Structure probing data (2A3 and DMS) for a 177-nucleotide construct. For DMS the reverse transcriptase was MarathonRT. Source: RMDB libraries RFM100 and RFMREP, as collected in RNAgym. The reactions ran in a buffer of 150 mM KOAc, 10 mM MgCl2 and 150 mM bicine (pH 8.5), at 24 C.

[RMDB]
RNA sequence: GGGAACGACUCGAGUAGAGUCGAAAACUGUUUAUCACCAGAUCCUAGAACCCUAUCAAUAUUGUCUCUGCUGUGUAAAUAGUUCUGAGUAGUGCAAUAUUGCUUAUAGGGUUUUGGUGUUUGGAAAAAGUCCGGUUAAAUUCGUUUAACCGGACUUAAAAGAAACAACAACAACAAC
Reactivity to 2A3 in 0.01 (KOAc 150mM, MgCl2 10mM, bicine 150mM(pH8.5), 24C), signal-to-noise 3, nucleotides 027 to 126: c000u010g060u080u170u070a170u140c040a020c030c000a000g000a020u020c000c000u010a030g010a010a010c010c000c000u010a000u030c000a000a000u000a010u020u040g180u060c020u000c010u110g030c000u010g040u010g110u290a090a180a160u180a180g230u220u110c050u230g080a000g010u010a000g010u010g010c000a000a000u000a000u010u000g000c030u080u060a050u020a010g000g020g000u000u000u000u000g010g000u000g000u000u010u010g010g000a030a090a040
Reactivity to DMS in 0.01 (KOAc 150mM, MgCl2 10mM, bicine 150mM(pH8.5), 24C), signal-to-noise 2, nucleotides 027 to 126: c080u000g020u030u000u010a140u020c130a240c010c000a000g000a020u000c300c010u010a000g010a000a020c000c020c020u000a010u000c000a000a000u000a000u000u000g000u030c050u020c010u000g000c000u030g000u010g000u070a080a110a130u060a080g030u030u000c080u030g000a040g030u040a060g020u000g050c000a000a000u010a000u000u000g000c300u030u030a020u020a000g000g000g000u000u000u000u000g010g000u010g000u000u000u010g000g000a070a050a070